[RMDB]
RNA sequence: GGGAACGACUCGAGUAGAGUCGAAAAGACGCCUUUAGAAGAAGAGGCUAGUGGGUAUUCCGGUGUGGGAUACUUAGUAAUAUGCAACGCUAAUUGCAUAAGAUUGUAGGACGGAAUUUACAGUCUUUAGAGAUAAGCACGUUCGCGUGCUUAUCAAGCCCUCUUGUUAGUUCGCUAACAAGAGGGCAAAAGAAACAACAACAACAAC
Reactivity to 2A3 in 0.01 (KOAc 150mM, MgCl2 10mM, bicine 150mM(pH8.5), 24C), signal-to-noise 2, nucleotides 027 to 156: g100a020c020g000c010c010u030u020u080a170g030a210a000g020a050a020g000a070g000g030c020u030a060g110u050g060g000g000u020a010u040u010c010c020g110g130u300g020u250g120g050g020a040u010a000c000u000u020a020g030u020a050a110u040a070u150g000c020a060a030c070g030c230u140a080a080u040u020g010c020a000u010a050a000g030a080u090u070g020u030a020g020g070a020c100g030g060a100a050u030u070u060a010c000a000g020u000c000u000u100u180a120g100a000g000a010u000a000a000g000c000a000c000g000u020u030c110g010c000g070u000g000c000u000u000a000u000c000a000a000
Chemical mapping of a 207-nucleotide RNA with 2A3. As a SHAPE reagent, 2A3 marks flexible, mostly unpaired nucleotides at the ribose 2'-OH. It was measured as part of the RMDB library M2RFPK. The reactions ran in a buffer of 150 mM KOAc, 10 mM MgCl2 and 150 mM bicine (pH 8.5), at 24 C. For 2A3, 883 sequencing reads were counted.